[RMDB]
RNA sequence: GGGAACGACUCGAGUAGAGUCGAAAAUGAUCGAGAGAUCUAACUAUGUACGCGAGUCAAGUGCACAGACUCGAGCGAAAGCUCGGUCGAAAGACCGCGUACAUGGAUCGGCAAGUGUACAGUCGAAGAUAUUAUCGCGCUUCGGCGCGAUAAUAUCAAAAGAAACAACAACAACAAC
Reactivity to DMS in 0.01 (KOAc 150mM, MgCl2 10mM, bicine 150mM(pH8.5), 24C), signal-to-noise 1, nucleotides 027 to 126: u000g020a020u000c000g000a250g020a270g000a020u000c000u000a030a130c010u000a000u000g000u000a000c000g030c010g020a040g010u000c000a020a060g010u000g030c030a010c030a300g000a000c000u010c000g000a020g000c000g010a140a090a170g030c030u000c020g010g000u010c000g020a070a070a160g000a000c000c010g010c000g010u000a000c000a010u000g000g000a030u000c050g000g000c000a050a040g010u000g000u000a000c000a300g000u000c020g010a160a170
Overview:
An RNA of 177 nucleotides, treated with DMS and read out base by base. The DMS profile rests on 1,089 reads. The RNA was probed in 150 mM KOAc, 10 mM MgCl2 and 150 mM bicine (pH 8.5) at 24 C.